[RMDB]
RNA sequence: GGGAACGACUCGAGUAGAGUCGAAAAACGUAUGCAGUCAUUCCUUAUGCAUAUAAUCGUGUGGCCAUCGACACAUACAUUUUCGAGAAUUGUGUCUUCUCUAGUGGCGGAUAGAGCGACGUUACCGUGCUGCAACCUCAUUCGUGAGGUUGCAGCAAAAAGAAACAACAACAACAAC
Reactivity to DMS in 0.01 (KOAc 150mM, MgCl2 10mM, bicine 150mM(pH8.5), 24C), signal-to-noise 2, nucleotides 027 to 126: a110c080g010u000a040u000g000c000a070g000u010c130a230u000u000c030c020u000u010a070u000g010c010a030u000a050u020a150a060u020c110g000u000g060u000g010g000c020c080a070u020c140g050a020c010a050c030a060u000a120c110a080u000u030u000u010c110g010a080g030a060a080u020u000g020u020g000u000c030u000u000c070u020c150u040a090g040u000g000g050c010g010g000a110u010a090g020a110g030c190g000a030c020g040u000u000a090c050c000g000
Reactivity to 2A3 in 0.01 (KOAc 150mM, MgCl2 10mM, bicine 150mM(pH8.5), 24C), signal-to-noise 2, nucleotides 027 to 126: a000c080g020u090a060u090g000c020a020g060u080c030a070u160u070c030c010u060u120a020u050g040c030a020u040a010u060a110a210u080c080g020u070g020u010g080g000c000c010a010u070c070g030a000c020a000c000a010u130a020c030a050u160u070u110u170c080g090a070g070a210a070u080u010g020u020g010u000c000u070u020c080u050c020u040a040g050u040g020g050c030g000g000a030u040a070g020a000g060c050g020a020c010g030u010u020a040c020c000g000
About this RNA: Chemical mapping of a 177-nucleotide RNA with DMS and 2A3. The 2A3 profile rests on 1,166 reads. Source: RMDB library OK2TST, as collected in RNAgym. 2A3 adducts were read by reverse transcription with SuperScript II with manganese.